[RMDB]
RNA sequence: GGGAACGACUCGAGUAGAGUCGAAAAGAUAUGGACUGGUGGAGAGCGACGAUCUCGGAAACGAGGGAGCUCCCACCCAGUCCUAAGUCAAAACUAACGCUUAUUAGUUCGCUAAUAAGCGUUAGAAUCAACUACGAUUCUUCGGAAUCGUAGUUGAAAAAGAAACAACAACAACAAC
Reactivity to DMS in 0.01 (KOAc 150mM, MgCl2 10mM, bicine 150mM(pH8.5), 24C), signal-to-noise 2, nucleotides 027 to 126: g010a070u020a300u000g010g020a010c000u000g010g010u000g000g010a110g000a010g010c020g010a060c190g000a030u010c000u000c000g000g000a090a120a210c000g000a010g010g000g000a030g010c000u020c000c000c010a010c070c030c020a000g020u000c000c000u000a010a110g020u000c030a070a090a110a190c010u000a000a000c010g000c000u000u000a010u000u000a000g000u000u030c190g020c000u010a000a000u000a000a000g010c010g000u000u000a000g000a080a130
Reactivity to 2A3 in 0.01 (KOAc 150mM, MgCl2 10mM, bicine 150mM(pH8.5), 24C), signal-to-noise 1, nucleotides 027 to 126: g020a010u090a050u130g000g010a000c000u000g070g020u000g010g170a300g040a000g270c000g270a300c020g030a040u000c020u020c000g000g060a080a100a050c020g040a010g000g000g000a000g040c020u000c000c000c000a000c050c020c010a000g000u000c010c000u000a060a000g020u000c000a050a010a080a110c000u010a010a000c000g000c010u010u000a000u020u010a010g050u070u100c300g000c140u020a000a000u000a000a000g010c010g000u000u000a000g000a000a000